[RMDB]
RNA sequence: GGGAACGACUCGAGUAGAGUCGAAAAUGUUGAAUCCUCUUAAUCCGACACCUAUUGUUGCCCCUGAGAUAGAGAUAAUUGUCAAACUGCGUGGUGCCAAGAAUAUUCAAUUUACGAUACCGUCGCACUCCUUGGUACUGUUCGCAGUACCAAGGAGAAAAGAAACAACAACAACAAC
Reactivity to DMS in 0.01 (KOAc 150mM, MgCl2 10mM, bicine 150mM(pH8.5), 24C), signal-to-noise 2, nucleotides 027 to 126: u000g020u000u000g000a220a060u000c070c050u010c120u000u000a150a060u000c030c060g040a050c060a070c060c030u000a060u000u000g030u000u000g000c060c030c000c040u000g000a130g020a070u000a020g000a080g000a080u010a040a150u000u000g000u010c070a050a090a090c110u010g010c030g050u000g020g000u000g010c030c030a050a270g000a030a020u000a040u000u000c210a050a080u000u000u010a020c290g000a070u000a070c090c030g010u030c010g030c160a150